RNA sequence: GGGAACGACUCGAGUAGAGUCGAAAAGAAGUUUGGAAGAAGUUCACUGCUAAUGCAUGUCUCCAGGAAGCAGGGAAUGAUCUCACAGUGACACUUGAGGCACAUUGCUGAGGCCGUCGAUGAGAAUUCAUGUAACUUUCUCCAGCUUACAGUGGACCGUCAGUUCAAGGUUCGCCUUGAACUGACGAAAAGAAACAACAACAACAAC
Reactivity to 2A3 in 0.01 (KOAc 150mM, MgCl2 10mM, bicine 150mM(pH8.5), 24C), signal-to-noise 1, nucleotides 027 to 156: g110a020a000g020u120u300u210g010g080a040a090g000a050a000g000u010u090c100a110c070u010g000c000u050a080a020u050g070c090a090u120g030u040c010u020c030c040a010g020g070a020a030g000c010a050g000g090g070a130a070u190g070a130u000c090u050c010a050c020a110g070u110g130a050c000a020c130u020u170g290a150g010g000c000a040c040a220u170u020g000c010u060g040a070g150g110c070c020g050u060c010g080a090u090g090a100g030a060a090u000u080c000a000u060g050u070a040a020c000u120u170u000c010u000c000c020a010g010c030u000u000a010c030a090g000u150g080g050a010c040